[RMDB]
RNA sequence: GGGAACGACUCGAGUAGAGUCGAAAAUUAAUACUGCUACAUUGUUAAGACCCUUAGUUAUUUAGCUUUACCGCCCAGGAUGGGGUGCAGCGUUCCUGCAAUAUCCAGGGCACCUAGGUGCAGCCUUCAUGCCUCAUGCCGUUCGCGGCAUGAGGAAGAUUAUCUUCCCGUUCGCGGGAAGAUAAUCAAAAGAAACAACAACAACAAC
Reactivity to 2A3 in 0.01 (KOAc 150mM, MgCl2 10mM, bicine 150mM(pH8.5), 24C), signal-to-noise 1, nucleotides 027 to 156: u080u000a090a040u080a130c040u030g030c000u040a050c040a100u090u030g080u090u180a100a080g070a130c020c020c050u020u010a050g060u040u040a130u130u090u160a070g010c010u020u070u050a020c020c000g010c050c030c040a000g010g000a020u020g020g040g000g110u050g000c020a000g000c030g130u110u100c000c010u020g000c000a000a080u000a000u120c000c000a000g000g000g000c000a000c000c000u030a050g020g000u040g070c010a010g010c000c010u120u130c070a090u130g000c000c000u000c000a000u000g000c000c010g000u020u080c140g000c010g120g010c000a000u000g000a000g000g000a000a000